[RMDB]
This 207-nucleotide RNA was probed chemically with 2A3. For 2A3 the reverse transcriptase was SuperScript II with manganese. Source: RMDB library M2RFPK, as collected in RNAgym. Reactivities are given for positions 27 through 156.
RNA sequence: GGGAACGACUCGAGUAGAGUCGAAAAGCAACUUAGGAUUUUAGGCUCCCCGUGCGUGUCUCGAACCAUGCCGGGCCAAACCCACGGGGGCUGGCUGUCCCCGUGCGGUCAAAAUCAAACCGCUGGAAAAACAGUUCUAGCUUCGGCUAGAACUGAACCGUGAAUAAUCGUUCGCGAUUAUUCACGGAAAAGAAACAACAACAACAAC
Reactivity to 2A3 in 0.01 (KOAc 150mM, MgCl2 10mM, bicine 150mM(pH8.5), 24C), signal-to-noise 1, nucleotides 027 to 156: g030c010a000a070c060u160u120a100g000g090a060u130u040u030u060a070g020g000c020u130c020c010c000c020g040u130g030c040g030u050g020u030c100u070c300g080a090a070c040c000a030u030g000c020c020g000g020g000c000c030a050a030a000c020c000c000a000c000g010g010g000g000g010c000u010g080g010c040u040g000u020c000c000c000c000g000u010g000c090g000g000u020c010a040a010a020a050u040c010a050a070a110c080c090g000c140u080g080g000a060a000a000a020a000c010a000g000u000u020c000u000a000g000c000u020u020c130g100g000c000u000a000g000a000a000c000u000g000a010a000